[RMDB]
RNA sequence: GGGAACGACUCGAGUAGAGUCGAAAAGAUAUGGAGUUGUGGAGUCCUGCAUGUGACUAUUCGGAAACGAACGAAUCACAUGGGACGUUGAAACAACUCCUAAGUCAAAGAAGGGUUCGCCCUUCAACUGCCAUAUAGUGUUCGCACUAUAUGGCAGAAAAGAAACAACAACAACAAC
Reactivity to 2A3 in 0.01 (KOAc 150mM, MgCl2 10mM, bicine 150mM(pH8.5), 24C), signal-to-noise 2, nucleotides 027 to 126: g020a020u080a030u140g000g000a010g010u010u010g020u020g080g040a030g020u030c030c040u160g270c050a000u000g000u010g020a030c070u080a060u010u020c040g000g020a110a170a070c060g010a040a010c030g100a190a300u020c000a010c000a000u000g020g030g010a010c000g010u080u050g000a000a000a000c000a000a000c000u010c000c000u010a000a030g000u010c050a180a030a000g010a000a010g060g030g000u120u180c250g260c000c000c060u010u000c010a010a030
Reactivity to DMS in 0.01 (KOAc 150mM, MgCl2 10mM, bicine 150mM(pH8.5), 24C), signal-to-noise 3, nucleotides 027 to 126: g010a030u010a300u000g010g010a000g010u000u000g000u000g000g000a160g010u000c000c010u000g020c110a020u010g020u000g020a010c110u010a300u010u000c010g000g000a090a080a220c010g000a010a030c090g000a060a080u000c010a000c000a000u000g010g000g010a010c010g000u000u010g010a200a140a020c000a000a000c000u000c010c010u010a040a080g010u000c050a090a080a090g000a010a010g010g010g020u010u000c260g000c010c010c010u010u000c000a080a170